The data come from the RNA Mapping Database (RMDB), library OK2TRN. Chemical mapping of a 177-nucleotide RNA with DMS and 2A3. For 2A3, 7,216 sequencing reads were counted. Values cover nucleotides 27 to 126. DMS adducts were read by reverse transcription with MarathonRT. The reactions ran in a buffer of 150 mM KOAc, 10 mM MgCl2 and 150 mM bicine (pH 8.5), at 24 C.
RNA sequence: GGGAACGACUCGAGUAGAGUCGAAAAUGAUCGAGAGAUCUAACGAUGUACGCGAGUCAAUCGCACAGACUCGAGCGAAAGCUCGGUCGAAAGACCGCGUACAUCGGUCGGCAAGUGUGUAGUCAAACCAGUAGUGACUAUUCGUAGUCACUACUGGAAAAGAAACAACAACAACAAC
Reactivity to DMS in 0.01 (KOAc 150mM, MgCl2 10mM, bicine 150mM(pH8.5), 24C), signal-to-noise 7, nucleotides 027 to 126: u010g000a010u000c010g010a250g000a250g000a020u000c010u000a090a110c010g000a000u000g010u000a000c000g010c000g010a120g010u000c000a040a230u000c060g010c200a080c220a230g000a010c030u010c030g020a010g010c000g000a120a100a160g010c000u000c000g010g010u000c000g000a030a050a260g000a010c010c010g010c000g010u000a000c010a000u000c000g000g010u000c060g000g010c080a070a070g020u000g000u000g010u000a060g010u010c070a050a130a200
Reactivity to 2A3 in 0.01 (KOAc 150mM, MgCl2 10mM, bicine 150mM(pH8.5), 24C), signal-to-noise 3, nucleotides 027 to 126: u080g000a000u010c020g000a000g000a000g000a100u000c010u020a070a040c000g010a000u010g000u000a000c010g030c020g030a070g060u000c020a000a050u060c030g010c080a110c020a100g030a010c050u100c240g000a000g000c000g040a110a010a010g010c010u000c010g010g000u020c040g000a000a000a000g000a000c000c010g000c000g000u000a000c000a000u000c000g000g010u040c020g040g030c040a080a110g090u050g030u030g020u190a070g050u050c020a040a040a060